[RMDB]
RNA sequence: GGGAACGACUCGAGUAGAGUCGAAAAGAUAUGGAGUUACCAGGCUUGGAUUUAUCGAGUAGGGUACAGUAUUCGGAAACGAAUACCGAGGCCCUACUCGAUUGUCAGCCUGCGUAACUCCUAAGUCCUACUCCAAAUGGUUCGCCAUUUGGAGUAGAAAAGAAACAACAACAACAAC
Reactivity to DMS in 0.01 (KOAc 150mM, MgCl2 10mM, bicine 150mM(pH8.5), 24C), signal-to-noise 2, nucleotides 027 to 126: g000a110u010a300u010g020g000a030g010u000u010a000c000c010a010g000g000c010u000u010g030g020a010u010u020u000a000u000c000g000a000g010u010a010g010g000g020u000a010c010a020g000u000a000u000u000c000g000g000a140a110a230c020g010a010a010u000a000c000c000g010a300g000g000c000c000c000u000a000c000u010c000g010a000u000u000g000u000c010a040g000c000c000u000g000c220g020u000a000a000c000u000c000c000u000a010a120g000u000c060